The record gives the reactivity of an RNA of 177 nucleotides to DMS and 2A3.
Reactivities are given for positions 27 through 126.
It was measured as part of the RMDB library OK2TST.
The RNA was probed in 150 mM KOAc, 10 mM MgCl2 and 150 mM bicine (pH 8.5) at 24 C.
The 2A3 profile rests on 26,209 reads.
For DMS, 21,468 sequencing reads were counted.
2A3 adducts were read by reverse transcription with SuperScript II with manganese.
RNA sequence: GGGAACGACUCGAGUAGAGUCGAAAAUCAUAGAUUAACUCAGAAGCACACGGUCACUGUGAGAAGAGACUGCAUGCUCCAUCAGUCUCCCAGACUAGCAUUCAGCACCAGGAACAGCUGCGGAGCACUAUUUACCCUAUUUCGAUAGGGUAAAUAGAAAAGAAACAACAACAACAAC
Reactivity to DMS in 0.01 (KOAc 150mM, MgCl2 10mM, bicine 150mM(pH8.5), 24C), signal-to-noise 9, nucleotides 027 to 126: u010c050a120u010a110g010a090u000u000a070a100c060u000c050a070g010a090a090g010c040a040c050a080c070g000g010u000c050a080c050u010g010u010g010a110g010a150a090g000a040g010a030c010u000g010c080a060u000g010c020u000c030c020a120u000c020a020g000u000c010u000c000c050c040a110g010a070c080u000a060g010c070a100u000u000c060a070g010c050a090c050c040a080g000g000a060a060c100a070g010c070u000g020c160g020g010a040g030c050a270
Reactivity to 2A3 in 0.01 (KOAc 150mM, MgCl2 10mM, bicine 150mM(pH8.5), 24C), signal-to-noise 9, nucleotides 027 to 126: u060c030a040u080a110g070a070u110u120a080a060c020u020c070a030g040a140a010g050c020a020c000a010c080g040g010u040c020a020c090u050g030u050g080a060g030a140a020g020a010g000a010c010u010g000c020a040u090g000c000u010c020c010a050u040c010a010g010u000c000u020c020c010c000a050g020a080c040u060a020g030c020a060u070u110c030a020g020c030a040c030c020a030g050g020a060a060c020a060g050c030u070g050c060g030g010a010g000c000a010